[RMDB]
RNA sequence: GGGAACGACUCGAGUAGAGUCGAAAAGACCAAUGAAAUUGUUGACUCUGUGCAGUAUGCUCAUAAACAUGACAUACAAAUUACUAAUGAGAGCUACAAUAAUUAUGUACCCUCAUAUGUUAAACCUACGUAUGGAUAAGUUCGCUUAUCCAUACGUAAAAGAAACAACAACAACAAC
Reactivity to 2A3 in 0.01 (KOAc 150mM, MgCl2 10mM, bicine 150mM(pH8.5), 24C), signal-to-noise 2, nucleotides 027 to 126: g040a000c000c050a010a080u160g080a030a070a030u060u020g060u030u030g080a100c010u020c020u050g080u070g070c010a030g030u020a000u000g020c020u000c010a020u050a070a260a010c110a070u050g000a000c010a010u020a020c030a010a150a040u150u110a050c030u090a040a100u120g050a010g030a000g030c010u040a040c000a000a040u060a070a040u160u070a040u120g030u060a060c000c000c000u010c040a040u050a030u100g060u030u030a130a110a030c020c020u000
Reactivity to DMS in 0.01 (KOAc 150mM, MgCl2 10mM, bicine 150mM(pH8.5), 24C), signal-to-noise 2, nucleotides 027 to 126: g000a300c060c030a190a150u000g000a100a130a160u000u000g000u000u000g000a090c100u020c040u000g000u000g020c100a060g000u000a000u000g010c180u020c000a000u020a140a130a150c270a190u010g000a050c020a030u000a030c050a030a090a130u000u000a060c080u010a110a040u000g010a020g020a020g000c250u000a020c000a010a020u000a050a050u020u010a100u000g000u000a080c050c020c000u000c040a020u010a080u010g000u010u020a050a020a130c220c100u000